[RMDB]
RNA sequence: GGGAACGACUCGAGUAGAGUCGAAAACAUCAUACCUACCAUGUAAUCCAGUGGUUUCAAUAUCAAAAAUAACAAAGGUGGCAUCACUUAACUUAGUGUUAUCUGGGUUGUGAACAAUUUUGAUGUGGACCACUUAUAUGUUCGCAUAUAAGUGGUCAAAAGAAACAACAACAACAAC
Reactivity to DMS in 0.01 (KOAc 150mM, MgCl2 10mM, bicine 150mM(pH8.5), 24C), signal-to-noise 4, nucleotides 027 to 126: c060a040u000c040a060u010a090c050c010u000a130c100c060a070u010g010u010a090a060u000c050c040a100g020u000g010g010u000u000u010c180a100a100u000a030u000c020a020a030a070a100a070u000a030a040c060a020a080a060g000g000u000g000g010c140a100u020c040a030c050u000u000a040a060c110u010u000a080g010u000g000u000u000a010u000c020u000g000g020g000u000u000g000u010g000a070a070c150a040a070u000u000u000u000g010a040u000g030u000g010
Reactivity to 2A3 in 0.01 (KOAc 150mM, MgCl2 10mM, bicine 150mM(pH8.5), 24C), signal-to-noise 4, nucleotides 027 to 126: c020a030u050c010a010u050a100c010c010u020a060c000c010a040u080g030u110a070a030u060c010c010a030g030u020g040g020u050u070u130c100a130a070u050a020u140c040a030a060a070a110a080u100a060a020c020a050a090a020g040g030u020g050g030c040a050u110c020a070c020u150u120a150a010c000u050u080a090g040u060g040u200u030a030u040c020u010g040g010g000u040u020g030u030g040a040a050c020a080a050u060u090u120u030g050a030u030g040u070g090